[RMDB]
Source: RMDB library OK1LIB, as collected in RNAgym. Chemical mapping of a 177-nucleotide RNA with 2A3. The 2A3 profile rests on 414 reads. The RNA was probed in 150 mM KOAc, 10 mM MgCl2 and 150 mM bicine (pH 8.5) at 24 C.
RNA sequence: GGGAACGACUCGAGUAGAGUCGAAAAAGAAUCCUAACCAGAGAGGAUUCUCUUAAAGUAGUGCGUCCUCGAGCUGUGAGAACCUCACUGCUGAGGACGACUUUGGGGUACCCCUCUGGUACGACCGGCGGUGCACCGUAUUCGUACGGUGCACCGCAAAAGAAACAACAACAACAAC
Reactivity to 2A3 in 0.01 (KOAc 150mM, MgCl2 10mM, bicine 150mM(pH8.5), 24C), signal-to-noise 1, nucleotides 027 to 126: a000g110a000a060u050c060c000u000a040a110c000c000a000g020a000g000a040g020g020a200u120u000c000u040c000u020u300a090a000a000g120u260a010g090u120g300c000g000u000c000c000u010c020g200a020g000c140u120g030u020g000a020g050a130a180c000c040u000c000a000c000u030g000c000u000g000a000g030g000a000c050g000a000c030u000u040u030g000g000g000g000u130a040c000c000c000c000u000c000u000g000g000u090a020c000g100a000c070c000g070